[RMDB]
About this RNA: Chemical mapping of a 177-nucleotide RNA with 2A3 and DMS. The reactions ran in a buffer of 150 mM KOAc, 10 mM MgCl2 and 150 mM bicine (pH 8.5), at 24 C. The data come from the RNA Mapping Database (RMDB), library OK2TST. As a SHAPE reagent, 2A3 marks flexible, mostly unpaired nucleotides at the ribose 2'-OH.

RNA sequence: GGGAACGACUCGAGUAGAGUCGAAAAGUGGGUGAAGUCGGUGGAUGAAGCCAUCGCGGCGUGUGGUGACGUACCAGAAAUCAUGGUGAUUGGCGGCGGUCGCGUUUAUGAACAGUUCUUGCCAAAACAACGAGGGUAUAUUCGUAUACCCUCGUUGAAAAGAAACAACAACAACAAC
Reactivity to 2A3 in 0.01 (KOAc 150mM, MgCl2 10mM, bicine 150mM(pH8.5), 24C), signal-to-noise 2, nucleotides 027 to 126: g050u050g000g010g010u010g050a060a020g130u120c070g000g000u040g040g010a080u130g110a080a020g010c030c020a010u030c050g010c010g030g000c050g010u130g050u040g050g030u030g030a040c030g020u010a050c000c020a030g080a030a150a020u170c080a060u090g060g010u070g050a170u030u110g050g000c020g000g020c000g010g020u050c020g000c010g040u020u070u020a110u100g060a050a000c020a030g020u000u000c000u040u010g050c020c000a070a000a050a060
Reactivity to DMS in 0.01 (KOAc 150mM, MgCl2 10mM, bicine 150mM(pH8.5), 24C), signal-to-noise 4, nucleotides 027 to 126: g040u000g000g010g030u000g010a050a110g010u000c070g020g020u010g000g000a120u010g010a120a150g010c040c020a030u010c050g000c070g010g010c070g020u010g020u000g010g020u010g010a100c100g020u000a080c070c040a080g010a080a060a060u010c100a060u000g000g020u010g010a100u000u000g020g000c040g010g020c060g000g010u000c050g010c060g000u000u000u000a040u010g010a060a090c130a090g010u000u000c040u020u010g000c070c070a080a070a090a190